[RMDB]
RNA sequence: GGGAACGACUCGAGUAGAGUCGAAAAUUGCUGCACGGCGAAGAUCGCUCCAUGAUCGCCCGGGCACGUAGAUUUCCAUCGGAGCUAUUUCCGUCUGCAUUGGCGCGAGCAGGCUCGCCGACAACGCUACACGUCCUUUAUUCGUAAAGGACGUGUAAAAAGAAACAACAACAACAAC
Reactivity to DMS in 0.01 (KOAc 150mM, MgCl2 10mM, bicine 150mM(pH8.5), 24C), signal-to-noise 7, nucleotides 027 to 126: u010u000g010c070u000g020c030a040c040g000g010c100g020a070a080g010a060u000c050g010c160u010c170c180a100u010g000a050u010c030g010c060c040c030g010g000g010c030a020c180g010u000a050g000a120u000u000u000c030c030a120u010c100g000g000a050g000c090u000a100u000u010u000c040c020g010u010c050u000g010c100a080u000u010g020g000c040g010c080g010a040g010c100a110g000g010c020u000c020g020c080c010g010a060c040a020a050c060g020c130
Reactivity to 2A3 in 0.01 (KOAc 150mM, MgCl2 10mM, bicine 150mM(pH8.5), 24C), signal-to-noise 4, nucleotides 027 to 126: u080u070g000c020u010g000c020a020c060g020g000c090g060a110a060g010a030u030c030g000c070u070c080c020a120u220g020a030u020c020g020c030c040c000g000g020g000c030a020c100g020u030a030g020a210u080u050u000c030c000a060u090c080g080g010a010g010c030u070a110u110u120u000c020c010g010u000c040u050g080c040a110u050u160g040g010c020g010c050g020a020g000c060a050g100g000c000u000c030g040c040c010g020a030c030a080a020c030g000c030
Conditions: 150 mM KOAc, 10 mM MgCl2 and 150 mM bicine (pH 8.5), 24 C. Structure probing data (DMS and 2A3) for a 177-nucleotide construct. 2A3 adducts were read by reverse transcription with SuperScript II with manganese. For 2A3, 6,421 sequencing reads were counted. Reactivities are rounded to 0.1 and cut off at 0 and 3.